[RMDB]
RNA sequence: GGGAACGACUCGAGUAGAGUCGAAAAUGCCAUGGACAGAAGAAGGCAGCAGGUGGCAGAAUGGGGUGCAUGAAGGUUUCUGAAAAUUAACACUGCUUGUGUUUUUAACUCAAUAUUUUCCAUGAAACAGCAUUUAAAUGUUCGCAUUUAAAUGCUGAAAAGAAACAACAACAACAAC
Reactivity to 2A3 in 0.01 (KOAc 150mM, MgCl2 10mM, bicine 150mM(pH8.5), 24C), signal-to-noise 1, nucleotides 027 to 126: u080g000c030c010a010u020g010g030a030c020a050g060a110a010g040a030a060g120g000c020a010g000c020a010g030g050u050g050g000c020a040g000a060a050u090g000g000g020g070u040g000c000a030u040g020a040a020g060g050u020u020u070c030u030g060a080a000a020a000u080u030a070a010c040a020c030u110g090c080u220u160g000u000g010u020u030u000u020u100a090a030c010u030c040a080a030u020a070u190u030u050u000c020c070a050u050g050a030a030a050
Reactivity to DMS in 0.01 (KOAc 150mM, MgCl2 10mM, bicine 150mM(pH8.5), 24C), signal-to-noise 4, nucleotides 027 to 126: u000g010c030c020a100u010g010g010a110c120a080g010a100a090g000a130a110g000g010c050a060g000c070a050g010g030u000g000g000c030a040g000a090a080u010g000g000g000g010u000g010c060a040u010g010a060a070g000g010u000u000u000c040u000g010a050a050a040a050u000u020a040a040c030a030c040u010g010c170u010u000g020u000g010u000u000u010u020u010a050a100c100u000c080a040a070u000a070u000u000u000u000c020c070a110u010g000a120a060a140

The data come from the RNA Mapping Database (RMDB), library OK2TRN. This 177-nucleotide RNA was probed chemically with 2A3 and DMS. The reactions ran in a buffer of 150 mM KOAc, 10 mM MgCl2 and 150 mM bicine (pH 8.5), at 24 C. DMS adducts were read by reverse transcription with MarathonRT. For DMS, 3,905 sequencing reads were counted. For 2A3 the reverse transcriptase was SuperScript II with manganese.